[RMDB]
Chemical mapping of a 177-nucleotide RNA with DMS and 2A3. For 2A3, 2,209 sequencing reads were counted.
RNA sequence: GGGAACGACUCGAGUAGAGUCGAAAAUUCGGGUGUUUCAUUACAGUAGUGUAUUACAAUACAAAGUAUGAACUUUGCAUUGUAAUACACUGUUAUAUUACUUGAGGGGCGUCCGCUUCGGCGGACGGAUAUUGCAGUAGUUCGCUACUGCAAUAUCAAAAGAAACAACAACAACAAC
Reactivity to DMS in 0.01 (KOAc 150mM, MgCl2 10mM, bicine 150mM(pH8.5), 24C), signal-to-noise 2, nucleotides 027 to 126: u010u000c020g020g020g010u010g010u000u000u010c160a090u010u000a180c260a200g040u000a040g080u010g040u000a000u000u000a000c000a030a010u000a030c000a010a000a020g020u010a160u020g000a060a150c000u000u000u000g020c010a000u000u000g000u000a000a000u010a000c000a000c010u000g000u000u010a040u010a040u000u000a060c080u000u000g010a040g010g010g000g020c010g000u000c010c000g020c000u000u010c170g030g020c000g020g010a000c000g000
Reactivity to 2A3 in 0.01 (KOAc 150mM, MgCl2 10mM, bicine 150mM(pH8.5), 24C), signal-to-noise 2, nucleotides 027 to 126: u060u020c010g020g030g020u060g030u030u110u090c170a130u220u300a300c100a190g300u300a000g000u050g000u000a030u000u010a000c010a010a010u020a020c010a000a020a020g050u110a170u300g170a300a090c000u000u000u040g000c020a000u000u000g000u010a010a010u000a000c000a000c010u000g000u010u000a010u000a010u040u120a050c050u030u060g060a060g020g000g000g030c000g010u000c010c000g000c020u000u030c180g090g000c020g000g000a000c000g000
2A3 adducts were read by reverse transcription with SuperScript II with manganese. The reactions ran in a buffer of 150 mM KOAc, 10 mM MgCl2 and 150 mM bicine (pH 8.5), at 24 C. The DMS profile rests on 3,017 reads.